[RMDB]
The data come from the RNA Mapping Database (RMDB), library M2RFPK. Structure probing data (DMS and 2A3) for a 207-nucleotide construct. The RNA was probed in 150 mM KOAc, 10 mM MgCl2 and 150 mM bicine (pH 8.5) at 24 C. For DMS, 5,408 sequencing reads were counted.
RNA sequence: GGGAACGACUCGAGUAGAGUCGAAAAACGGAUGGUACGCCAUCCGACCAUUGGGUAGAAGCGUUCAAUUAGCACCGUGACGGUGCAGAUGGGAAAUUGCCCAUGAUACGCACCAUACGUGGUGCGAAAAAGCCAUCGGUGUUCGCACCGAUGGCAACUUCUAUCUCAUGUUCGCAUGAGAUAGAAGAAAAGAAACAACAACAACAAC
Reactivity to DMS in 0.01 (KOAc 150mM, MgCl2 10mM, bicine 150mM(pH8.5), 24C), signal-to-noise 2, nucleotides 027 to 156: a140c030g000g000a060u000g000g000u000a100c300g060c010c000a010u010c000c030g030a030c030c000a260u000u000g010g000g020u010a070g020a120a130g000c080g020u000u010c090a070a110u000u000a210g000c010a020c030c010g020u000g010a150c120g010g030u000g040c010a030g000a030u000g000g000g000a040a110a110u000u000g000c020c010c030a020u010g000a110u000a080c030g020c010a030c000c000a100u000a080c170g030u010g020g030u000g020c000g000a000a020a080a060a130g030c010c000a020u000c030g050g040u000g010u010u000c270g010c040a020c010c010g040a010u000g000g010c010a000a000
Reactivity to 2A3 in 0.01 (KOAc 150mM, MgCl2 10mM, bicine 150mM(pH8.5), 24C), signal-to-noise 6, nucleotides 027 to 156: a000c010g010g000a000u010g000g020u050a040c230g070c030c000a000u000c000c000g010a020c000c010a080u060u110g030g000g010u060a050g030a150a010g060c040g030u040u080c080a100a080u090u070a060g000c000a000c000c030g080u140g180a120c200g010g000u000g010c020a000g000a010u040g030g000g010a020a160a160u080u080g050c000c000c000a000u040g040a010u040a030c020g000c000a010c010c000a010u050a120c230g070u060g000g000u000g000c000g010a030a020a000a020a000g000c000c000a000u000c000g000g000u020g030u050u080c210g020c080a000c000c000g000a000u000g000g010c000a000a000